[RMDB]
RNA sequence: GGGAACGACUCGAGUAGAGUCGAAAAGAACGCGGACCGGAACGGAUGAGGGUCGGAGACAAGCGACGGAGCUGGUUGUGGACACUGUCACGAUAGAUAAACUCCGACCGCAGCACACCAUAUUUGGUGCCUUAAGGCCGUUCGCGGCCUUAAGGCAAAAAGAAACAACAACAACAAC
Reactivity to DMS in 0.01 (KOAc 150mM, MgCl2 10mM, bicine 150mM(pH8.5), 24C), signal-to-noise 1, nucleotides 027 to 126: g000a050a120c150g000c020g000g000a110c000c000g000g000a040a030c050g000g000a170u000g000a170g000g000g000u090c000g070g000a000g000a060c030a130a300g150c040g000a100c060g000g000a070g010c070u000g000g010u000u000g000u010g000g030a140c080a000c130u000g010u000c010a070c000g000a220u070a010g000a140u000a150a300a090c000u000c010c000g000a070c000c000g000c010a020g000c020a040c050a000c020c000a120u030a090u010u010u020g000g000
Reactivity to 2A3 in 0.01 (KOAc 150mM, MgCl2 10mM, bicine 150mM(pH8.5), 24C), signal-to-noise 2, nucleotides 027 to 126: g080a020a000c010g000c090g010g000a010c000c000g010g010a030a080c000g020g040a040u150g120a110g040g020g030u090c000g000g010a040g040a080c120a110a000g000c040g040a040c070g010g020a020g040c070u110g030g070u120u020g060u130g020g050a000c060a030c170u060g040u120c000a000c010g010a010u040a020g100a020u150a060a100a000c000u000c000c000g000a000c000c010g000c000a000g000c050a060c000a000c070c040a030u090a200u110u200u240g040g000
An RNA of 177 nucleotides, treated with DMS and 2A3 and read out base by base. For DMS the reverse transcriptase was MarathonRT. For 2A3 the reverse transcriptase was SuperScript II with manganese. The DMS profile rests on 1,171 reads.